[RMDB]
RNA sequence: GGGAACGACUCGAGUAGAGUCGAAAAGUAGUUCACAAUGCUCUAAGAGGACACCUUUGUCACAAGUGUGACUGAGUCAGCAGCUUAUCACAAGCGUGUCGCUAAGACAUCCUCAGAAGGUGUAAUACGGUAUCAUCAUGUUCGCAUGAUGAUACCGAAAAGAAACAACAACAACAAC
Reactivity to DMS in 0.01 (KOAc 150mM, MgCl2 10mM, bicine 150mM(pH8.5), 24C), signal-to-noise 5, nucleotides 027 to 126: g020u000a040g030u020u000c090a060c130a110a080u050g010c080u030c010u010a160a120g000a060g010g020a060c050a110c150c020u000u020u010g000u000c000a010c030a220a180g000u040g000u000g010a030c060u000g000a010g000u000c060a170g020c190a130g010c020u000u010a070u040c100a110c210a010a010g010c130g000u000g010u000c020g000c130u020a040a060g000a030c080a110u000c020c000u000c050a040g030a090a080g000g000u000g000u010a030a060u040a180
Reactivity to 2A3 in 0.01 (KOAc 150mM, MgCl2 10mM, bicine 150mM(pH8.5), 24C), signal-to-noise 7, nucleotides 027 to 126: g080u120a020g030u090u070c060a020c040a110a120u160g060c010u030c000u100a110a070g020a010g070g030a010c010a050c020c010u060u060u060g010u010c010a010c050a270a210g130u120g010u000g300a030c030u040g020a020g040u050c020a020g010c040a000g010c030u080u060a150u300c060a040c050a150a020g010c040g030u060g040u070c050g000c050u040a040a000g010a020c000a040u050c000c020u050c020a040g080a040a010g060g010u050g030u060a060a090u170a080
An RNA of 177 nucleotides, treated with DMS and 2A3 and read out base by base. For DMS, 6,944 sequencing reads were counted. DMS adducts were read by reverse transcription with MarathonRT.